[RMDB]
RNA sequence: GGGAACGACUCGAGUAGAGUCGAAAAGAUAUGGAGUAUGGUGGGAGCUGAAUAUAUCGGAAACGAUAUACAGCGACGAUCACCAUUACUCCUAAGUCAAAGAUAUGCGGCUUCGGCCGCAUAUCAACAAUCAUCGUUACUUCGGUAACGAUGAUUGAAAAGAAACAACAACAACAAC
Reactivity to DMS in 0.01 (KOAc 150mM, MgCl2 10mM, bicine 150mM(pH8.5), 24C), signal-to-noise 2, nucleotides 027 to 126: g010a030u000a190u010g000g010a010g010u000a000u010g000g030u010g030g010g010a050g010c010u000g000a210a170u000a010u000a000u000c000g000g000a060a060a120c010g010a010u000a000u000a010c000a000g030c000g010a090c300g010a050u000c010a010c000c000a000u000u020a020c010u000c000c000u000a000a110g000u000c020a170a100a130g020a010u010a000u000g000c000g010g000c000u010u010c300g030g020c010c000g000c000a000u000a000u000c000a090a230
Reactivity to 2A3 in 0.01 (KOAc 150mM, MgCl2 10mM, bicine 150mM(pH8.5), 24C), signal-to-noise 1, nucleotides 027 to 126: g010a010u040a010u080g000g000a000g000u010a030u030g000g000u010g020g020g040a080g000c000u020g060a260a030u040a000u000a000u030c000g000g050a050a020a010c000g000a000u000a000u000a020c000a030g030c010g110a160c030g030a020u000c010a000c010c000a000u000u030a010c000u000c000c000u000a010a010g020u000c050a150a060a100g000a010u000a010u030g000c030g000g040c010u050u270c300g190g000c000c000g020c030a000u000a000u000c000a000a010

An RNA of 177 nucleotides, treated with DMS and 2A3 and read out base by base. High 2A3 reactivity points to a flexible backbone, as in loops and unpaired stretches. DMS adducts were read by reverse transcription with MarathonRT. The RNA was probed in 150 mM KOAc, 10 mM MgCl2 and 150 mM bicine (pH 8.5) at 24 C. For 2A3 the reverse transcriptase was SuperScript II with manganese. It was measured as part of the RMDB library TTRDES.